[RMDB]
The record gives the reactivity of an RNA of 207 nucleotides to 2A3 and DMS. The DMS profile rests on 3,578 reads. The reactions ran in a buffer of 150 mM KOAc, 10 mM MgCl2 and 150 mM bicine (pH 8.5), at 24 C. For 2A3 the reverse transcriptase was SuperScript II with manganese.
RNA sequence: GGGAACGACUCGAGUAGAGUCGAAAAUCAGACGUUCUCGCUAUACGCUCUUCAACCUUAAGCCACCGCUCCUUAGGAGAACUGUAUGGAGUCAGUCAAUCAACCAUAACGCGAAUACUACAGCGUAAGACAUGGAGACACAUUUAAUGGCUGAGAAAUUUCCGGUUAAUUUCGAUUAACCGGAAAUAAAAGAAACAACAACAACAAC
Reactivity to 2A3 in 0.01 (KOAc 150mM, MgCl2 10mM, bicine 150mM(pH8.5), 24C), signal-to-noise 4, nucleotides 027 to 156: u110c020a010g020a060c040g020u030u000c040u020c020g010c050u060a050u030a130c080g020c040u060c030u080u070c040a080a090c020c020u080u120a090a000g010c020c020a060c010c070g040c040u010c000c010u030u040a050g000g050a070g080a100a050c030u080g040u060a070u110g040g040a040g070u050c020a010g010u010c020a040a050u020c020a040a120c010c020a020u080a100a010c020g010c010g150a090a090u150a190c090u070a070c090a040g000c000g030u020a060a020g100a050c050a070u030g010g040a020g020a000c040a000c000a090u060u120u110a090a070u070g000g000c000u020g000a020g060a100a150
Reactivity to DMS in 0.01 (KOAc 150mM, MgCl2 10mM, bicine 150mM(pH8.5), 24C), signal-to-noise 2, nucleotides 027 to 156: u000c060a110g010a090c050g000u000u000c020u000c020g000c040u010a090u000a060c030g030c020u000c020u000u000c030a020a140c090c030u000u000a040a180g020c040c020a090c090c030g020c020u000c020c020u010u000a130g010g000a130g010a090a040c000u020g050u000a260u000g000g020a070g020u000c020a090g030u000c050a070a150u000c020a050a080c010c010a040u010a090a030c090g000c010g010a110a050u000a120c050u000a130c070a260g030c030g010u000a070a090g010a140c060a100u000g020g000a220g000a130c020a090c020a080u000u010u000a090a080u000g000g020c000u000g000a050g020a060a080